An RNA of 207 nucleotides, treated with DMS and 2A3 and read out base by base. DMS adducts were read by reverse transcription with MarathonRT. The RNA was probed in 150 mM KOAc, 10 mM MgCl2 and 150 mM bicine (pH 8.5) at 24 C.
RNA sequence: GGGAACGACUCGAGUAGAGUCGAAAAUGGAGUUCUGUCAGUAGGUUGUCGACAUCGUCCGGCCACAUCGACGCCGCUGUCGGUAGUGUUUGCCAAAGGAGGUCGACUAAUGCCGGGCCGUGGCUCUGAACGACCCGUUCGUCGACCUUGUAAUAUCAAUUAGAGCUAAUUUCGAUUAGCUCUAAUUAAAAGAAACAACAACAACAAC
Reactivity to DMS in 0.01 (KOAc 150mM, MgCl2 10mM, bicine 150mM(pH8.5), 24C), signal-to-noise 4, nucleotides 027 to 156: u010g020g010a160g010u000u000c020u010g000u000c050a100g040u000a080g080g020u000u000g030u000c040g010a040c040a110u000c080g030u000c040c050g020g020c040c040a080c090a090u000c010g010a030c010g010c020c110g030c070u000g010u000c020g020g000u000a080g020u000g020u000u000u010g000c050c040a060a130a160g000g010a050g020g020u000c000g010a030c010u000a040a060u000g010c240c030g090g010g000c000c010g040u000g010g020c060u000c130u000g020a070a070c020g020a030c010c010c010g020u000u000c160g010u000c020g010a040c020c020u010u000g010u000a050a100u000a120u010c060
Reactivity to 2A3 in 0.01 (KOAc 150mM, MgCl2 10mM, bicine 150mM(pH8.5), 24C), signal-to-noise 4, nucleotides 027 to 156: u110g040g000a080g040u100u050c040u030g030u070c020a030g020u150a190g030g070u250u300g020u090c000g020a010c030a120u090c050g090u060c040c070g020g020c050c000a030c000a000u030c010g000a010c000g060c080c040g020c060u060g020u020c030g010g010u070a150g020u040g010u070u130u090g010c020c010a070a010a010g150g000a010g000g000u000c010g000a000c000u000a030a020u110g060c050c010g000g000g000c010c000g010u050g090g030c060u050c150u220g060a020a000c000g050a020c020c000c000g020u040u050c030g010u000c000g010a010c000c000u000u040g050u060a090a130u130a100u300c030